Chemical mapping of a 177-nucleotide RNA with 2A3.
The 2A3 profile rests on 232 reads.
For 2A3 the reverse transcriptase was SuperScript II with manganese.
It was measured as part of the RMDB library OK1LIB.
[RMDB]
RNA sequence: GGGAACGACUCGAGUAGAGUCGAAAAUAAAGGAUGGAUUUCCUUCAACACCCUUGGUUACUUCUAAAAUAAGAAUUUAUGUAAACAAUCUUUUAGAGCUUAAGGGUAAAUCUUAUCUUUUAAAAGAGAUAAAUGGCCCUUUCGAGGGCCAUUUAUCAAAAGAAACAACAACAACAAC
Reactivity to 2A3 in 0.01 (KOAc 150mM, MgCl2 10mM, bicine 150mM(pH8.5), 24C), signal-to-noise 1, nucleotides 027 to 126: u110a020a000a000g020g000a020u040g000g000a010u000u030u030c010c000u070u040c130a300a270c050a200c090c000c000u000u000g020g000u090u000a130c040u170u060c000u000a020a020a020a020u220a300a000g090a180a180u070u030u100a300u220g050u180a000a030a080c200a090a150u040c120u000u210u000u000a020g000a000g000c070u220u300a000a000g000g000g000u150a010a010a010u000c000u000u220a220u030c000u070u000u170u300a050a130a000a000g070a000